Record summary
Chemical mapping of a 177-nucleotide RNA with 2A3 and DMS. For 2A3, 4,197 sequencing reads were counted. High 2A3 reactivity points to a flexible backbone, as in loops and unpaired stretches.
RNA sequence: GGGAACGACUCGAGUAGAGUCGAAAAGAAGGUCGAGUGCACGACCAGAGAGUGCGGUGAGUGACCGACAAAGAGUUCGAAUCGGAACGAACGACCGCAAACGAUCGACUGAAGAUCGAAGUGAGAAACGGUCCAUUAAUUUCGAUUAAUGGACCGUAAAAGAAACAACAACAACAAC
Reactivity to 2A3 in 0.01 (KOAc 150mM, MgCl2 10mM, bicine 150mM(pH8.5), 24C), signal-to-noise 5, nucleotides 027 to 126: g070a130a060g030g000u020c010g000a040g080u220g040c140a030c110g010a010c000c030a000g020a010g000a000g020u080g000c000g000g000u040g020a100g020u050g050a120c020c010g010a000c010a010a210a030g100a050g060u150u290c070g050a050a060u080c030g070g000a020a030c010g010a030a010c040g040a020c010c000g000c000a080a050a110c040g000a020u050c000g070a090c140u200g060a040a000g000a030u000c010g020a110a040g110u180g080a060g050a050a160
Reactivity to DMS in 0.01 (KOAc 150mM, MgCl2 10mM, bicine 150mM(pH8.5), 24C), signal-to-noise 5, nucleotides 027 to 126: g010a180a090g000g020u010c010g050a170g020u020g000c050a100c050g000a050c020c000a080g000a080g000a150g000u010g000c050g010g010u010g000a110g000u030g000a080c010c020g000a060c110a070a130a110g010a160g000u000u010c060g010a130a110u030c030g000g000a300a070c010g010a120a070c050g000a040c010c010g020c010a050a100a140c020g010a020u000c010g000a130c180u020g030a110a140g000a050u000c010g010a110a110g000u040g000a080g000a110a080